Source: RMDB library OK2TRN, as collected in RNAgym. Structure probing data (DMS and 2A3) for a 177-nucleotide construct. For DMS the reverse transcriptase was MarathonRT.

RNA sequence: GGGAACGACUCGAGUAGAGUCGAAAAUACGUAUGCAUCGAUUACUUCAAGGUGAUGUAGGUUCAGGAAAAACAGUAGUUGCUGCAAUUUGUAUGUAUGCGUUAAAAACGGCUGGUUAUCAAUCAGCUACCCUGUUGGUCUUCGGACCAACAGGGUAAAAAGAAACAACAACAACAAC
Reactivity to DMS in 0.01 (KOAc 150mM, MgCl2 10mM, bicine 150mM(pH8.5), 24C), signal-to-noise 1, nucleotides 027 to 126: u000a050c000g000u000a020u000g000c000a000u000c020g000a030u010u000a060c050u010u000c090a060a070g020g020u000g030a030u000g020u000a070g000g020u010u000c050a070g020g000a060a090a020a120a060c100a050g000u000a180g010u000u000g090c040u000g030c160a020a020u000u000u000g030u060a040u010g010u000a020u010g010c000g000u010u000a050a020a060a070a070c300g000g000c000u000g010g000u000u010a190u000c240a040a040u000c000a030g020c040
Reactivity to 2A3 in 0.01 (KOAc 150mM, MgCl2 10mM, bicine 150mM(pH8.5), 24C), signal-to-noise 1, nucleotides 027 to 126: u130a010c020g020u040a000u020g000c000a020u010c020g090a070u060u040a050c030u020u030c050a070a100g080g030u010g040a120u190g060u100a070g020g170u110u110c130a060g120g000a060a100a010a000a000c090a020g120u090a060g020u120u080g010c010u040g010c010a020a040u010u010u220g070u080a000u040g000u010a000u020g030c000g020u010u010a170a000a010a000a000c020g020g000c000u000g060g000u090u080a160u300c030a020a020u000c000a020g050c060
Conditions: 150 mM KOAc, 10 mM MgCl2 and 150 mM bicine (pH 8.5), 24 C. For DMS, 693 sequencing reads were counted.